RNA sequence: GGGAACGACUCGAGUAGAGUCGAAAAACGUGCACGCGCCCCACGCCGAGAGCGCCGCGGCAGCCCCGGGGACCUUCUGCCGCGGGUGCGACGAGUGCGACCGCGCCUGGCACGCUCACGAUGCCGGCGGACGAUGUCUAUUCGUAGACAUCGUCCGAAAAGAAACAACAACAACAAC
Reactivity to DMS in 0.01 (KOAc 150mM, MgCl2 10mM, bicine 150mM(pH8.5), 24C), signal-to-noise 1, nucleotides 027 to 126: a300c170g090u030g050c050a020c230g000c000g000c020c010c000c040a190c090g060c090c000g000a150g040a170g000c000g000c010c010g000c020g000g000c000a010g020c040c030c000c110g020g000g020g000a090c030c000u050u050c060u000g000c020c000g030c040g000g000g000u030g020c060g050a020c140g060a170g010u000g000c010g000a060c200c140g000c050g060c020c020u040g000g000c020a090c090g000c070u050c070a030c080g000a080u020g000c030c000g000g000
Reactivity to 2A3 in 0.01 (KOAc 150mM, MgCl2 10mM, bicine 150mM(pH8.5), 24C), signal-to-noise 2, nucleotides 027 to 126: a000c010g020u020g000c050a040c040g000c010g020c000c000c010c020a060c000g080c030c030g090a080g020a010g100c040g000c000c000g000c000g010g000c000a000g060c000c030c000c020g000g000g000g120a050c010c030u070u050c000u040g010c000c020g000c000g010g000g020u050g010c010g000a100c030g040a030g040u080g040c080g030a030c010c050g050c020g010c040c030u010g000g010c010a000c010g010c010u050c010a050c070g040a040u120g030c010c000g010g030